[RMDB]
RNA sequence: GGGAACGACUCGAGUAGAGUCGAAAAGGUGACUCUGACUGUGACUGUGACUGCAGCUGCUCUGCUCUUUUGCCACUAUGCUUACAUGGUGCCAGGCUGGCAAGCGGAAGCCAUGCGAUCUGCCCAGCGGCACGACUAUAUUCGUAUAGUCGUGCCGAAAAGAAACAACAACAACAAC
Reactivity to 2A3 in 0.01 (KOAc 150mM, MgCl2 10mM, bicine 150mM(pH8.5), 24C), signal-to-noise 5, nucleotides 027 to 126: g080g010u060g020a030c000u010c000u070g040a070c030u040g010u060g080a060c020u060g060u070g090a050c020u040g010c010a020g000c010u030g010c010u040c020u050g060c000u010c000u030u100u060u060g050c030c010a050c040u080a060u120g040c040u110u100a090c040a070u090g010g000u020g030c050c020a050g030g000c040u020g030g020c040a060a030g040c020g050g030a010a010g020c000c010a010u080g030c010g040a080u030c010u050g010c000c020c000a020g060
Reactivity to DMS in 0.01 (KOAc 150mM, MgCl2 10mM, bicine 150mM(pH8.5), 24C), signal-to-noise 3, nucleotides 027 to 126: g000g020u000g010a090c030u010c010u000g010a130c050u010g010u010g000a130c110u010g020u000g000a090c120u000g010c030a070g010c030u000g020c030u010c070u010g000c050u010c040u000u000u020u000g020c140c030a060c040u020a020u030g020c110u010u010a050c100a060u010g010g000u010g000c150c050a080g000g010c010u010g000g000c090a090a100g000c020g000g000a090a110g000c010c060a060u010g020c040g010a020u030c020u020g000c000c000c010a120g010

Chemical mapping of a 177-nucleotide RNA with 2A3 and DMS.
Source: RMDB library OK1LIB, as collected in RNAgym.
The RNA was probed in 150 mM KOAc, 10 mM MgCl2 and 150 mM bicine (pH 8.5) at 24 C.